[RMDB]
RNA sequence: GGGAACGACUCGAGUAGAGUCGAAAAUCUUAGGUUCCUAGUGAUAAAGCGGAAUCAGCCUUUUCACAAGAUUAAUCUUUUGGUCGGUCUUAACUAGUUGAAGAUUCGGUGUUUUUGCGAUUUUACCAAUGAGUGAGAAGUUCGCUUCUCACUCAUUAAAAGAAACAACAACAACAAC
Reactivity to 2A3 in 0.01 (KOAc 150mM, MgCl2 10mM, bicine 150mM(pH8.5), 24C), signal-to-noise 2, nucleotides 027 to 126: u030c000u080u100a140g000g090u030u030c010c020u020a070g040u020g070a070u090a220a040a030g020c060g040g110a100a240u180c040a030g040c010c000u050u020u040u050c020a080c000a040a000g040a050u120u160a060a060u090c000u000u090u070u010g060g010u010c020g000g030u000c010u020u010a090a070c030u060a110g150u080u130g100a060a030g010a040u170u050c010g000g050u030g030u070u000u020u000u120g000c020g000a000u060u000u030u130a050c020c000
Reactivity to DMS in 0.01 (KOAc 150mM, MgCl2 10mM, bicine 150mM(pH8.5), 24C), signal-to-noise 3, nucleotides 027 to 126: u000c060u010u000a090g000g000u000u000c050c000u000a100g030u010g000a050u000a020a050a100g010c030g020g000a130a080u020c100a150g020c020c030u010u000u010u000c030a040c070a080a050g000a070u000u010a080a080u000c020u000u000u000u000g020g030u000c050g000g000u010c020u000u000a060a090c060u000a090g020u000u000g000a070a080g000a050u000u000c070g020g010u000g000u000u000u000u000u000g020c080g000a120u000u010u000u000a080c100c120